[RMDB]
RNA sequence: GGGAACGACUCGAGUAGAGUCGAAAAGAAUCGGUUGUCAUGCGAUAAACCGUCGUUGAGUCUUUAAUAUAGGUCAGUUGAGUCAAUUGAAAUAACUCUAGUUGAAUAUCAAAAGUAUCGUCUGGUGUAUCUACAUUGAUUUUUUGGUUUACUUGUAUAAUAAUCGUCCAUUCGUGGACGAUUAUUAAAAAGAAACAACAACAACAAC
Reactivity to 2A3 in 0.01 (KOAc 150mM, MgCl2 10mM, bicine 150mM(pH8.5), 24C), signal-to-noise 3, nucleotides 027 to 156: g090a030a040u080c010g010g020u030u030g010u040c030a070u180g060c050g040a030u090a090a090a010c020c020g030u060c060g020u040u020g030a030g020u000c020u010u140u000a150a080u180a090u160a120g040g020u040c020a030g030u050u030g020a000g020u030c030a040a090u080u070g110a080a060a080u120a090a030c010u000c000u080a060g070u030u090g040a060a060u050a010u130c060a010a090a090a010g000u010a030u040c020g040u000c020u040g000g000u000g010u000a020u020c010u030a010c020a070u010u010g030a070u090u070u050u020u060u130g070g000u040u000u050a150c010u080u110g030u120a070
Reactivity to DMS in 0.01 (KOAc 150mM, MgCl2 10mM, bicine 150mM(pH8.5), 24C), signal-to-noise 2, nucleotides 027 to 156: g010a130a090u000c030g030g060u000u010g010u000c040a140u010g050c070g020a140u000a060a080a040c040c010g010u000c090g020u010u010g000a130g010u000c020u000u000u000a060a110u000a130u010a070g020g030u000c030a070g020u000u000g010a070g020u010c030a040a130u010u000g010a100a110a190u000a040a080c020u000c020u000a060g030u000u010g020a060a070u000a040u010c040a050a060a010a190g000u000a020u000c030g010u000c030u010g040g040u000g000u000a030u000c020u000a070c040a070u010u000g010a020u000u000u000u000u000u000g010g020u000u000u000a110c030u010u010g010u000a220
Background: This 207-nucleotide RNA was probed chemically with 2A3 and DMS. DMS adducts were read by reverse transcription with MarathonRT. The DMS profile rests on 4,314 reads. The RNA was probed in 150 mM KOAc, 10 mM MgCl2 and 150 mM bicine (pH 8.5) at 24 C. The data come from the RNA Mapping Database (RMDB), library OK3TST.